[RMDB]
RNA sequence: GGGAACGACUCGAGUAGAGUCGAAAAGCCAGAAUGGUGCAGGCUAUAGCUGCCAUCGGCUGACCUAGAGAAGACACAUCAGCUGAUCCUUUGGACCCAUUGACUUGAGACAGAAGUUCUGGGCUUCUCCUCCUGCGGCCUAGCUCUGAGACAAUGACCUAAAUGCUAGUUUCGACUAGCAUUUAGGAAAAGAAACAACAACAACAAC
Reactivity to 2A3 in 0.01 (KOAc 150mM, MgCl2 10mM, bicine 150mM(pH8.5), 24C), signal-to-noise 3, nucleotides 027 to 156: g010c000c010a070g070a110a060u080g030g020u180g130c070a060g080g000c060u100a080u210a220g060c030u080g000c010c010a020u020c000g000g000c000u010g010a030c010c050u040a020g010a020g020a200a040g080a040c050a010c000a140u050c030a020g000c020u050g010a060u080c010c000u050u050u090g050g020a050c000c010c020a060u010u110g040a100c030u040u060g020a030g010a090c030a050g100a130a030g070u080u050c040u050g000g050g020c030u040u020c010u000c020c020u040c010c010u030g020c030g010g010c010c010u020a020g000c000u000c020u060g030a040g010a020c040a040a100u080g070a070
Reactivity to DMS in 0.01 (KOAc 150mM, MgCl2 10mM, bicine 150mM(pH8.5), 24C), signal-to-noise 3, nucleotides 027 to 156: g030c010c010a060g030a090a080u010g020g030u010g000c030a090g020g020c060u010a120u010a090g030c010u010g040c010c070a040u010c030g010g010c010u000g010a060c020c020u000a120g040a150g010a110a090g000a150c110a040c080a100u000c030a130g000c040u000g000a080u000c020c030u000u010u010g010g010a100c040c000c030a120u000u010g010a090c040u000u000g000a150g020a180c070a060g000a090a100g000u000u000c110u010g000g000g010c010u000u010c050u000c030c020u010c020c030u000g020c050g030g040c000c020u000a070g010c020u010c040u020g020a110g020a110c050a060a060u000g000a230

The record gives the reactivity of an RNA of 207 nucleotides to 2A3 and DMS.
Conditions: 150 mM KOAc, 10 mM MgCl2 and 150 mM bicine (pH 8.5), 24 C.
DMS adducts were read by reverse transcription with MarathonRT.
For DMS, 5,149 sequencing reads were counted.